[RMDB]
RNA sequence: GGGAACGACUCGAGUAGAGUCGAAAACGGUGUAGUCGAAAAGCUGGAUGCCCACUGCCCAGUUGACCCGCAGGGCGCCCAGGAUCAACAGGUUGGCCACCACAAACGUCGGUGUGCUCAACACCAGCGCAUGGUUCAAAUUCGUUUGAACCAUGCGAAAAGAAACAACAACAACAAC
Reactivity to DMS in 0.01 (KOAc 150mM, MgCl2 10mM, bicine 150mM(pH8.5), 24C), signal-to-noise 1, nucleotides 027 to 126: c100g030g060u000g000u000a050g010u000c170g010a070a050a090a120g020c030u000g000g000a110u000g000c060c020c050a170c120u000g000c000c000c000a150g010u000u000g000a090c010c030c030g040c130a090g000g010g040c070g040c080c090c030a060g010g010a090u000c050a060a080c140a150g060g010u000u000g000g000c020c000a020c010c010a010c050a060a100a090c220g010u000c150g000g000u000g020u010g020c030u000c040a030a040c020a120c130c030a060g020